[RMDB]
Overview
Structure probing data (2A3 and DMS) for a 177-nucleotide construct. The 2A3 profile rests on 778 reads. Source: RMDB library OK2TRN, as collected in RNAgym.
RNA sequence: GGGAACGACUCGAGUAGAGUCGAAAAGGAUCCGCUCACAGGAUUGUCUCUGUGUUCCGAAACUCCAACAGUAUUGCUUCGGGACACCUACAGCAAUACUGUAGGUAUAGAGAGUAGGAGCGGAUCGCAGCUGACUCCACUUCGGUGGAGUCAGCUGAAAAGAAACAACAACAACAAC
Reactivity to 2A3 in 0.01 (KOAc 150mM, MgCl2 10mM, bicine 150mM(pH8.5), 24C), signal-to-noise 1, nucleotides 027 to 126: g060g030a000u000c000c010g000c030u030c000a300c070a030g220g030a210u060u260g210u120c000u010c000u020g000u010g040u040u020c030c000g000a000a030a000c050u100c060c040a010a070c020a170g110u160a090u080u190g050c020u000u000c010g020g000g000a030c020a030c010c000u000a000c010a010g030c030a090a130u110a300c010u000g000u000a010g030g010u030a050u120a040g050a000g010a020g030u090a050g050g000a010g000c000g020g000a000u000c000g000
Reactivity to DMS in 0.01 (KOAc 150mM, MgCl2 10mM, bicine 150mM(pH8.5), 24C), signal-to-noise 1, nucleotides 027 to 126: g000g000a050u000c000c010g050c020u000c000a120c170a120g030g020a140u010u000g010u000c070u000c010u000g030u030g000u000u000c000c000g030a040a040a050c010u000c230c090a110a100c230a140g000u000a280u000u000g000c040u000u010c090g000g030g080a010c070a020c020c010u000a000c220a030g000c030a120a060u010a300c010u000g020u000a030g020g000u020a030u000a000g000a000g000a060g010u010a230g010g000a010g000c000g000g000a000u000c010g010